[RMDB]
Annotation:
Structure probing data (DMS and 2A3) for a 177-nucleotide construct.
RNA sequence: GGGAACGACUCGAGUAGAGUCGAAAACCCCAGCCUCCUCGCUGGCGCCGGCUGGGCAACGAUCCGAGGGAACUAUUCCUCUCGAGAAUCGGCAAAUGGGGCCCCUCGCUCGUAUCUCCGAGAGGAGCACUCUUAAAUGGUUCGCCAUUUAAGAGUGAAAAGAAACAACAACAACAAC
Reactivity to DMS in 0.01 (KOAc 150mM, MgCl2 10mM, bicine 150mM(pH8.5), 24C), signal-to-noise 4, nucleotides 027 to 126: c060c010c000c110a080g000c030c030u000c030c010u000c080g030c040u000g000g010c080g040c050c050g010g010c060u010g000g000g010c050a080a090c050g000a060u000c020c020g020a040g010g010g020a070a150c240u000a150u010u000c020c000u020c000u000c000g000a090g020a120a110u000c010g000g000c100a060a070a100u010g010g000g010g010c030c010c030c020u000c060g010c040u000c060g020u000a110u010c020u000c040c020g000a190g000a190g010g000a030g010
Reactivity to 2A3 in 0.01 (KOAc 150mM, MgCl2 10mM, bicine 150mM(pH8.5), 24C), signal-to-noise 4, nucleotides 027 to 126: c010c000c000c010a040g030c010c010u020c000c000u040c040g030c050u050g040g000c030g070c030c000g040g070c020u070g030g030g000c020a060a040c030g010a020u020c020c000g010a010g000g010g020a030a040c050u070a210u120u090c030c000u130c010u020c000g160a180g030a160a070u020c010g030g010c030a050a060a120u170g010g000g020g010c010c000c010c010u030c020g020c010u040c040g090u110a120u050c030u010c020c020g020a020g020a040g050g000a010g000